[RMDB]
RNA sequence: GGGAACGACUCGAGUAGAGUCGAAAAGUAAUAGAUAACUGGAUGCAGCGUAGGGGCCAACGCAUAUCCAGUACGAAUGGUACCUGUAAAUAAAAUAUGGUCCCUAGUACAAGUACCAACAGAAGGAUAAGCGAUGGUGAUGUCAAUCACAUUUGCAGAUACGCGUCCCAUUCGUGGGACGCGUAUCAAAAGAAACAACAACAACAAC
Reactivity to 2A3 in 0.01 (KOAc 150mM, MgCl2 10mM, bicine 150mM(pH8.5), 24C), signal-to-noise 1, nucleotides 027 to 156: g040u150a040a220u230a160g140a160u150a280a000c000u000g000g000a000u040g090c300a110g000c240g000u020a050g020g000g000g000c010c000a000a000c000g000c000a000u020a000u160c000c000a000g000u000a000c000g090a160a050u030g000g000u040a000c020c040u000g000u000a000a070a070u190a040a080a050a000u220a160u000g010g010u000c000c000c020u030a000g000u000a000c010a010a010g000u000a000c010c010a010a030c020a010g030a100a070g020g020a030u020a090a030g020c000g090a090u040g050g300u110g000a070u080g070u300c220a090a080u000c000a030c000a080u120u060u090g040c050a030